[RMDB]
RNA sequence: GGGAACGACUCGAGUAGAGUCGAAAAGAUAUGGACCCUUCUAAGUCUCGCUAGGCGACACUUUCUCUUAUCGGAAACGAUAAGAAUAAGUGUCGCCUAGAACUACGAGACUGAGGGUCCUAAGUCAGUAUUCCUUAGCGUUCGCGCUAAGGAAUACAAAAGAAACAACAACAACAAC
Reactivity to DMS in 0.01 (KOAc 150mM, MgCl2 10mM, bicine 150mM(pH8.5), 24C), signal-to-noise 2, nucleotides 027 to 126: g000a060u000a300u010g000g010a000c000c000c010u000u020c240u010a110a020g010u000c000u010c000g030c000u000a000g010g000c000g000a030c000a010c000u000u000u000c110u020c000u010u000a010u000c000g000g000a120a160a240c010g000a020u000a010a010g000a030a030u000a000a010g010u010g030u000c000g000c000c000u000a000g000a020a050c230u000a300c020g010a010g000a010c000u010g000a010g000g010g010u000c000c000u000a000a090g000u000c040a110
Chemical mapping of a 177-nucleotide RNA with DMS. Conditions: 150 mM KOAc, 10 mM MgCl2 and 150 mM bicine (pH 8.5), 24 C. For DMS, 1,972 sequencing reads were counted.